The record gives the reactivity of an RNA of 177 nucleotides to 2A3 and DMS.
RNA sequence: GGGAACGACUCGAGUAGAGUCGAAAAGGGAUAUGGGAAUGGCAUGCCUAAACCAUAUCCACUGGCGUAGCGCGCGUACCUAUACCAUAGCGCGCGAAGGUAUAGGAUAAGGCAUGCCAAGCCAGGAGGGAUGCCUGGUCUUCGGAUUAGGCAUCCCAAAAGAAACAACAACAACAAC
Reactivity to 2A3 in 0.01 (KOAc 150mM, MgCl2 10mM, bicine 150mM(pH8.5), 24C), signal-to-noise 8, nucleotides 027 to 126: g030g010g000a010u020a020u070g020g000g060a090a160u060g010g020c040a020u040g020c000c020u090a150a050a020c010c000a000u000a000u010c000c000a030c030u030g040g020c050g050u090a030g020c000g010c010g000c020g060u090a150c010c030u050a040u020a070c010c030a070u110a110g030c050g000c010g010c010g040a030a010g000g010u020a010u040a030g010g000a030u060a090a070g010g000c000a000u010g000c000c010a000a000g090c000c010a030g040g040a050
Reactivity to DMS in 0.01 (KOAc 150mM, MgCl2 10mM, bicine 150mM(pH8.5), 24C), signal-to-noise 7, nucleotides 027 to 126: g000g020g000a050u000a010u000g010g020g030a080a100u020g010g010c020a020u000g000c000c000u000a090a120a100c020c030a040u000a010u010c000c000a030c100u010g010g000c070g020u020a140g010c050g010c020g010c020g020u040a130c050c030u000a060u010a060c040c020a080u020a160g000c010g010c110g000c020g010a080a080g000g010u000a020u000a030g000g000a140u010a110a030g000g000c010a000u000g000c000c010a040a080g010c060c050a060g000g010a300

Values cover nucleotides 27 to 126. 2A3 adducts were read by reverse transcription with SuperScript II with manganese. Conditions: 150 mM KOAc, 10 mM MgCl2 and 150 mM bicine (pH 8.5), 24 C. The data come from the RNA Mapping Database (RMDB), library OK1LIB.